[RMDB]
RNA sequence: GGGAACGACUCGAGUAGAGUCGAAAAAUGCAUAACGCAUCAACUUUGGCUGGUAUGGCAUUUGCAAAUGCAUUCUUAGGCAUUGCACACUCAAUUGCACAUAAAAUUGGUGGCGAAUAUGGUAUUCGUAUGAAAUAGUUUUCGAACUAUUUCAUACAAAAGAAACAACAACAACAAC
Reactivity to 2A3 in 0.01 (KOAc 150mM, MgCl2 10mM, bicine 150mM(pH8.5), 24C), signal-to-noise 9, nucleotides 027 to 126: a000u080g010c020a030u060a170a040c080g000c010a030u040c030a030a100c060u120u090u120g110g000c060u070g030g070u100a060u060g060g000c020a050u030u020u080g010c040a050a070a090u020g000c010a050u130u080c070u140u190a100g080g000c030a030u010u030g000c030a030c000a020c060u130c040a040a110u070u070g030c070a050c020a110u170a090a090a050a070u040u050g040g000u030g050g040c020g040a110a060u110a080u100g060g020u090a120u070u140c060
Reactivity to DMS in 0.01 (KOAc 150mM, MgCl2 10mM, bicine 150mM(pH8.5), 24C), signal-to-noise 9, nucleotides 027 to 126: a040u010g010c010a060u020a060a140c150g020c020a030u000c060a050a050c140u010u010u020g010g000c030u010g000g010u010a040u010g010g000c040a040u010u020u000g010c070a060a090a070u000g010c010a050u010u010c110u020u030a100g010g010c040a030u010u000g010c020a090c160a070c120u030c070a040a040u010u000g010c060a070c100a080u020a030a020a040a060u010u010g000g030u010g000g000c030g010a060a070u020a030u020g010g010u020a060u020u020c120

Structure probing data (2A3 and DMS) for a 177-nucleotide construct. 2A3 adducts were read by reverse transcription with SuperScript II with manganese. The reactions ran in a buffer of 150 mM KOAc, 10 mM MgCl2 and 150 mM bicine (pH 8.5), at 24 C. Source: RMDB library OK1LIB, as collected in RNAgym. For 2A3, 59,729 sequencing reads were counted.